[RMDB]
RNA sequence: GGGAACGACUCGAGUAGAGUCGAAAAGAUUAUGUGGGAGAGGCGCCCUUUCGUUUCUUCGGAUAAUUAAUUGCCAGUCGCUGGCUUUAGCGAUAUUGAUGUCAUCUGUAGCGAUGACUAUGCUACCUUAAGGUAUGAUCCGGAUACCCCCGGUAAAAGCCUAUAAAUAGUUCGCUAUUUAUAGGCUAAAAGAAACAACAACAACAAC
Reactivity to DMS in 0.01 (KOAc 150mM, MgCl2 10mM, bicine 150mM(pH8.5), 24C), signal-to-noise 2, nucleotides 027 to 156: g010a100u000u000a010u000g010u000g020g000g000a070g010a080g020g030c020g000c240c080c060u000u000u000c010g000u010u000u000c010u010u020c030g000g000a110u000a040a070u000u000a040a110u000u030g040c050c020a140g040u000c050g040c010u000g020g000c080u000u000u010a040g010c040g010a080u000a100u010u010g010a120u010g030u000c000a010u000c000u000g040u000a170g030c130g010a040u010g020a020c010u010a090u000g010c020u000a030c000c030u010u020a110a090g020g020u000a030u000g000a100u000c030c000g020g000a170u010a270c060c010c030c010c050g000g010u000a060a070a110
Reactivity to 2A3 in 0.01 (KOAc 150mM, MgCl2 10mM, bicine 150mM(pH8.5), 24C), signal-to-noise 2, nucleotides 027 to 156: g020a020u080u070a020u080g140u160g100g000g050a030g010a020g010g010c020g040c020c080c040u030u130u090c060g010u030u020u000c000u040u020c000g060g020a000u030a050a030u190u080a020a060u120u220g020c030c020a050g040u040c010g020c050u060g040g020c080u080u070u120a010g000c010g010a000u010a110u100u170g060a040u090g000u010c000a000u000c010u090g270u300a000g070c070g040a000u000g010a010c010u010a030u040g020c010u000a030c000c040u110u210a060a070g010g000u030a030u070g040a020u080c000c000g000g000a000u050a070c000c000c000c000c020g000g000u030a080a070a010